[RMDB]
RNA sequence: GGGAACGACUCGAGUAGAGUCGAAAAAUCGAAGCUGACACAGCGUCGGGAAAAUGUCCGACUUUCGAGCAUCAGCAGCACCAGAAGCCAUCCAUCCUGUUGCGAAAGUGAAUGCUGUGGUGGUGGCGACCGUCAUAUCGUUCGCGAUAUGACGGUCAAAAGAAACAACAACAACAAC
Reactivity to 2A3 in 0.01 (KOAc 150mM, MgCl2 10mM, bicine 150mM(pH8.5), 24C), signal-to-noise 4, nucleotides 027 to 126: a000u140c080g030a060a010g000c010u020g020a040c000a010c000a110g010c040g040u020c020g000g000g090a060a160a010a130u250g190u060c010c000g020a020c000u090u130u120c090g030a030g020c030a040u040c020a000g040c000a000g000c010a020c060c010a020g120a150a000g000c000c000a010u070c000c000a020u010c000c000u040g020u040u060g020c060g120a080a050a040g130u160g170a100a070u170g000c000u010g010u030g020g000u000g000g010u010g000g010c000
Reactivity to DMS in 0.01 (KOAc 150mM, MgCl2 10mM, bicine 150mM(pH8.5), 24C), signal-to-noise 1, nucleotides 027 to 126: a010u010c060g000a070a140g000c000u000g030a080c050a100c010a070g020c060g000u000c020g100g000g000a000a060a140a060u040g000u000c020c000g000a020c000u000u000u000c060g030a080g000c050a060u010c040a060g010c030a000g000c010a040c020c080a110g000a090a070g000c010c000a000u040c020c000a040u000c080c070u010g000u000u000g000c020g000a040a030a060g000u000g000a080a050u000g000c020u000g000u040g020g030u000g040g010u010g020g000c020